[RMDB]
Chemical mapping of a 207-nucleotide RNA with 2A3.
RNA sequence: GGGAACGACUCGAGUAGAGUCGAAAAAAAAGGUAAAGCAAGGUUCGAUUGAUUUCAGACUUUUGUUAAAUAUUUCAUCAUCCAACUAUAGCAUGACAUCAUGCGAUGAGCUAAUGCGAGAAGUCAUGCCAAACGAAACUGGAUUUACACUUUGAUCGUGCUAUUUCAAGUUCGCUUGAAAUAGCACAAAAGAAACAACAACAACAAC
Reactivity to 2A3 in 0.01 (KOAc 150mM, MgCl2 10mM, bicine 150mM(pH8.5), 24C), signal-to-noise 3, nucleotides 027 to 156: a000a000a010a040g040g010u050a030a040a030g030c060a010a000g010g020u030u010c020g000a030u000u030g040a070u060u160u110c050a060g030a080c000u080u030u060u050g040u040u090a080a170a060u170a210u090u210u060c100a090u030c000a000u010c020c020a070a030c050u110a100u070a160g000c010a000u000g030a110c010a120u170c010a000u070g010c000g050a050u100g000a000g020c050u080a190a020u150g020c040g000a050g030a120a020g000u000c000a020u020g020c000c010a040a040a000c000g060a090a000a010c010u010g000g060a000u030u020u050a080c270a030c000u020u000u080g020a080u100c050